[RMDB]
RNA sequence: GGGAACGACUCGAGUAGAGUCGAAAAAACCACAAUAUGCAUAAAUCUAACUCCUACCAUCAGCGACACACUGCUUGACACAUAUUGCGAGAAGCACCUCGCAUUUGCGGGUUCUCUUAAGCAAAAUCGAACCAAGACCAUUCGUGGUCUUGGUUCGAAAAGAAACAACAACAACAAC
Reactivity to 2A3 in 0.01 (KOAc 150mM, MgCl2 10mM, bicine 150mM(pH8.5), 24C), signal-to-noise 1, nucleotides 027 to 126: a000a000c180c150a120c050a130a090u250a100u150g050c000a040u050a060a050a110u000c000u000a010a060c000u010c020c020u050a050c020c070a090u020c130a050g010c000g030a000c000a000c020a040c150u040g000c000u030u010g000a020c110a000c010a080u010a090u130u020g000c000g040a000g020a080a020g010c000a000c040c000u150c060g000c020a010u040u010u080g000c020g020g040g000u060u020c000u020c000u060u090a000a010g000c080a020a000a000a040u040